[RMDB]
Source: RMDB library OK2TST, as collected in RNAgym.
This 177-nucleotide RNA was probed chemically with DMS and 2A3.
The 2A3 profile rests on 9,165 reads.
DMS adducts were read by reverse transcription with MarathonRT.
The RNA was probed in 150 mM KOAc, 10 mM MgCl2 and 150 mM bicine (pH 8.5) at 24 C.
RNA sequence: GGGAACGACUCGAGUAGAGUCGAAAAGGUCACGCGCCAGCUCGACGUUGAUCACCGUUUCCAGGGCGGCGAUGUCCAGCCCGCGGGCGGCCACGUCGGUGGCCACCAGUACGUUGCAACUGCGGUACAUUUAAUGAUCGUUCGCGAUCAUUAAAUGAAAAGAAACAACAACAACAAC
Reactivity to DMS in 0.01 (KOAc 150mM, MgCl2 10mM, bicine 150mM(pH8.5), 24C), signal-to-noise 9, nucleotides 027 to 126: g010g010u000c030a040c100g020c080g010c040c030a090g010c100u010c050g000a030c030g010u010u000g020a070u010c140a150c060c010g000u000u010u010c040c050a240g010g000g010c010g010g020c020g020a110u010g010u010c010c020a160g030c010c000c020g010c160g020g000g010c020g010g010c060c010a010c010g010u010c120g010g010u000g000g000c010c030a080c030c010a080g010u010a060c110g010u000u010g010c060a100a100c070u000g010c040g010g000u000a180
Reactivity to 2A3 in 0.01 (KOAc 150mM, MgCl2 10mM, bicine 150mM(pH8.5), 24C), signal-to-noise 5, nucleotides 027 to 126: g020g000u010c020a000c100g070c040g020c040c020a050g020c030u030c020g020a020c020g050u070u170g040a110u120c040a000c030c000g010u060u260u010c030c040a020g030g000g000c010g010g000c070g090a180u190g050u040c000c010a030g010c020c010c000g020c170g020g010g000c020g000g000c020c010a020c020g110u120c060g050g030u010g010g000c020c000a020c010c010a010g030u060a040c090g060u080u160g050c040a110a050c060u070g000c040g060g020u060a030